An RNA of 177 nucleotides, treated with 2A3 and DMS and read out base by base.

RNA sequence: GGGAACGACUCGAGUAGAGUCGAAAAAUUGAUGAAGCAAUUAAGAAUUAGUAAGAUCCAAUCUUCCAACAUUGGUGACCACAUCAUAACAUUCAUAAAUACCUACGGCUUCGUACGGCGAAAUUGGCUCUCUGUACCUCUUCGGAGGUACAGAGAGAAAAGAAACAACAACAACAAC
Reactivity to 2A3 in 0.01 (KOAc 150mM, MgCl2 10mM, bicine 150mM(pH8.5), 24C), signal-to-noise 3, nucleotides 027 to 126: a000u110u100g020a020u090g030a050a040g020c020a010a070u060u040a080a100g070a110a170u080u100a180g070u070a100a000g020a000u010c030c000a000a000u030c050u190u130c120c100a040a000c030a070u000u060g100g000u060g030a030c020c040a020c030a090u070c020a040u040a100a070c010a050u010u130c030a010u150a090a110a020u110a150c000c010u050a060c060g040g000c030u050u040c000g010u040a040c070g040g020c050g060a060a050a060u110u100g050g000
Reactivity to DMS in 0.01 (KOAc 150mM, MgCl2 10mM, bicine 150mM(pH8.5), 24C), signal-to-noise 2, nucleotides 027 to 126: a040u090u020g000a070u000g000a030a080g040c110a100a050u000u000a080a110g000a100a000u000u030a050g080u000a120a010g000a050u000c070c000a070a020u000c030u000u030c140c060a160a300c300a040u000u000g090g000u080g000a150c260c060a000c020a110u000c030a000u000a110a120c140a140u000u000c000a040u050a020a000a010u000a140c010c000u000a030c030g000g000c060u000u000c000g000u000a000c210g040g000c130g000a040a030a150u030u000g000g000
The reactions ran in a buffer of 150 mM KOAc, 10 mM MgCl2 and 150 mM bicine (pH 8.5), at 24 C. The data come from the RNA Mapping Database (RMDB), library OK1LIB. For DMS, 1,415 sequencing reads were counted.